[RMDB]
RNA sequence: GGGAACGACUCGAGUAGAGUCGAAAACCCACCAAGUUCUUAUCAAGAGAAGCAGAAGGACUGGCCAGACGAAGCUUCAGCAACCGGUGUAAUGGCGAAAGCCAUGACCAAGGUGCUAAAUCCAGCAAGCUCGAACAGCUUGGAAGAUAAGAACAGAUCAUCCAGUCCUAUUCGUAGGACUGGAUGAAAAAGAAACAACAACAACAAC
Reactivity to DMS in 0.01 (KOAc 150mM, MgCl2 10mM, bicine 150mM(pH8.5), 24C), signal-to-noise 1, nucleotides 027 to 156: c000c000c000a130c080c090a000a240g000u000u020c030u020u020a070u000c040a070a160g000a300g000a080a050g030c000a060g000a070a300g000g000a060c000u000g030g050c000c060a030g020a030c020g010a170a030g030c170u000u050c050a120g000c010a120a220c020c020g000g050u000g050u000a060a000u000g000g040c020g000a090a050a300g020c030c000a000u000g000a190c020c000a170a170g030g000u000g070c050u000a080a050a050u000c050c000a030g000c000a080a000g000c050u000c000g030a120a140c220a300g020c020u000u000g000g010a230a150g030a050u000a030a020g000a050a000c000a300g030a110
Reactivity to 2A3 in 0.01 (KOAc 150mM, MgCl2 10mM, bicine 150mM(pH8.5), 24C), signal-to-noise 2, nucleotides 027 to 156: c020c000c010a000c030c030a130a000g000u020u000c000u000u020a000u020c030a100a000g060a000g000a130a000g000c030a020g040a260a050g140g030a020c060u060g050g010c010c060a040g030a040c030g030a110a020g000c010u010u010c020a000g000c010a030a110c010c000g000g010u080g130u210a090a040u010g010g000c010g040a050a010a000g000c010c010a000u000g010a000c030c030a030a130g020g000u000g000c010u010a060a030a070u040c010c010a010g020c010a060a050g000c000u060c100g130a120a050c030a070g000c000u010u010g040g030a040a040g000a020u000a000a010g000a000a000c000a010g020a040